[RMDB]
RNA sequence: GGGAACGACUCGAGUAGAGUCGAAAAGAUAAGAUGUCUGUCGAGGACUCAACCGAAGCAAAAGAAACACAACAUCAACCUGUGGACUGUGCUCAAGAAAGUCAAUUCUCAGUUGACAUAUGACCUGUCCUCUUCUGGAUUUCGAUCCAGAAGAGGAAAAAGAAACAACAACAACAAC
Reactivity to DMS in 0.01 (KOAc 150mM, MgCl2 10mM, bicine 150mM(pH8.5), 24C), signal-to-noise 3, nucleotides 027 to 126: g000a090u010a080a090g000a070u020g000u000c030u010g010u030c120g000a180g000g000a060c020u010c050a100a140c050c030g000a130a070g020c060a100a010a020a020g010a000a000a020c010a030c020a010a020c030a000u300c020a010a000c030c090u010g000u000g010g000a010c050u000g000u000g010c000u040c020a010a090g000a140a030a030g030u000c010a050a070u000u010c030u020c120a110g010u050u000g000a010c080a050u040a050u030g030a070c050c050u000g000
Reactivity to 2A3 in 0.01 (KOAc 150mM, MgCl2 10mM, bicine 150mM(pH8.5), 24C), signal-to-noise 4, nucleotides 027 to 126: g050a020u160a080a040g040a030u080g040u040c010u020g090u080c050g040a050g020g020a030c000u000c050a020a050c010c000g050a030a000g020c040a010a000a010a050g010a010a020a050c050a000c000a000a010c000a010u000c000a000a010c010c010u060g020u030g040g000a010c020u040g040u060g040c010u000c030a090a090g070a140a070a010g020u030c010a030a080u220u060c080u020c070a050g000u030u040g020a030c020a010u160a050u050g060a050c020c000u020g010
The record gives the reactivity of an RNA of 177 nucleotides to DMS and 2A3. For 2A3, 20,428 sequencing reads were counted. 2A3 adducts were read by reverse transcription with SuperScript II with manganese.